[RMDB]
An RNA of 207 nucleotides, treated with DMS and 2A3 and read out base by base.
RNA sequence: GGGAACGACUCGAGUAGAGUCGAAAACUGACGUUCGCGUCAGGAUCGUCCUAAGUCGAAGAGGUUAGCGGGAGCUGUGGCGUUCGGAAACGAACGAAUCAGCGAGGAUCGCUAACUCCCCACCUUCGAUAUGGAAAUUGAGAUACUUCGGUAUCAAGGUGACUAUCAGAUUCGUCUGAUAGUCACCAAAAGAAACAACAACAACAAC
Reactivity to DMS in 0.01 (KOAc 150mM, MgCl2 10mM, bicine 150mM(pH8.5), 24C), signal-to-noise 1, nucleotides 027 to 156: c030u000g000a050c000g030u000u000c200g060c030g000u000c010a020g000g020a030u010c030g000u000c000c000u020a130a230g030u010c000g020a010a010g000a300g000g020u000u000a010g010c000g010g000g000a130g020c030u000g050u000g010g030c020g000u010u010c010g010g010a190a190a270c030g000a050a160c000g000a040a100u030c000a000g000c000g000a140g000g000a130u020c000g030c020u000a020a020c010u000c150c130c000c050a300c180c030u000u010c010g020a020u000a240u000g020g000a010a130a050u000u000g000a110g000a100u000a030c020u020u020c300g080g010u030a080u010c000a130a280
Reactivity to 2A3 in 0.01 (KOAc 150mM, MgCl2 10mM, bicine 150mM(pH8.5), 24C), signal-to-noise 4, nucleotides 027 to 156: c000u000g000a010c010g040u060u080c300g020c020g090u000c010a000g050g020a120u170c090g090u020c000c020u060a100a020g020u000c000g000a000a000g010a010g030g010u000u010a000g010c000g000g010g010a040g010c000u020g060u130g140g080c000g010u010u000c010g030g020a030a070a090c020g000a000a000c000g010a020a070u100c000a000g020c000g000a080g000g020a010u000c000g000c000u000a000a000c000u010c010c010c000c010a040c010c010u000u020c000g010a000u020a050u130g040g060a050a070a090u210u300g030a100g010a110u030a010c010u040u140c300g100g010u020a010u030c070a080a100